[RMDB]
RNA sequence: GGGAACGACUCGAGUAGAGUCGAAAAGAGUUCGGUUGGAGCGACAAGUAUUUAGCUUGACAUAGCUAAAUCACCUCGGUAUGAUUAGGGUGAGACCUAGGAACCGUAGGGGUAUUCUCAAAGGAAGGUUACCGAACAACCUUCGGGUUGUUCGGAAGAAGGAUUCACGAUUCGUCGUGAAUCCUUCAAAAGAAACAACAACAACAAC
Reactivity to DMS in 0.01 (KOAc 150mM, MgCl2 10mM, bicine 150mM(pH8.5), 24C), signal-to-noise 1, nucleotides 027 to 156: g000a160g070u000u010c050g060g050u010u010g010g000a120g040c080g010a050c070a010a090g020u000a090u000u000u000a000g000c010u000u000g010a210c150a150u000a070g050c000u010a000a000a000u010c020a010c040c010u010c070g030g060u010a100u010g010a250u040u000a010g000g030g030u000g030a220g000a220c040c000u000a070g010g000a170a090c020c030g010u010a080g010g020g040g010u000a050u000u000c050u000c010a070a080a170g020g010a090a040g030g000u000u010a190c010c000g020a020a020c010a040a020c000c010u000u010c300g030g070g000u000u000g000u000u000c000g000g000a000a020
Reactivity to 2A3 in 0.01 (KOAc 150mM, MgCl2 10mM, bicine 150mM(pH8.5), 24C), signal-to-noise 2, nucleotides 027 to 156: g030a000g000u060u080c030g040g030u080u050g080g000a060g000c030g070a060c010a030a060g100u080a040u010u030u060a000g000c000u030u060g100a110c020a090u300a010g000c030u030a010a000a000u020c040a030c020c010u010c030g020g020u300a220u210g070a140u060u090a050g000g020g000u060g090a110g060a060c000c010u030a010g020g010a000a080c050c000g020u030a020g000g020g020g000u020a120u200u000c080u010c010a090a060a010g090g020a030a040g060g040u100u060a080c000c000g000a010a000c000a000a000c010c000u000u050c070g090g000g010u020u000g000u000u000c000g000g000a000a000